[RMDB]
RNA sequence: GGGAACGACUCGAGUAGAGUCGAAAAGAACCCGCGUGUGCCGGGCUAGGGCCAUCCGACGGGCGCGCUCCCUCCGGGCUGCGGGAGGGCACGACGGGUGGGGUGGCGGCAGGUGAAGAGGAGUGUGUCCCAAACUACAUUUCGAUGUAGUUUGGGAAAAAGAAACAACAACAACAAC
Reactivity to DMS in 0.01 (KOAc 150mM, MgCl2 10mM, bicine 150mM(pH8.5), 24C), signal-to-noise 2, nucleotides 027 to 126: g000a180a220c020c020c020g010c120g000u000g020u010g020c030c040g020g000g020c090u000a040g020g030g000c020c030a040u000c020c010g030a150c030g000g000g010c030g020c050g000c050u000c000c010c000u000c040c030g020g020g040c080u000g030c150g010g000g010a020g000g020g000c080a020c040g010a130c060g000g020g000u000g000g020g000g020u010g000g020c060g000g010c070a060g000g000u000g000a050a100g000a080g020g000a100g000u000g010u010g020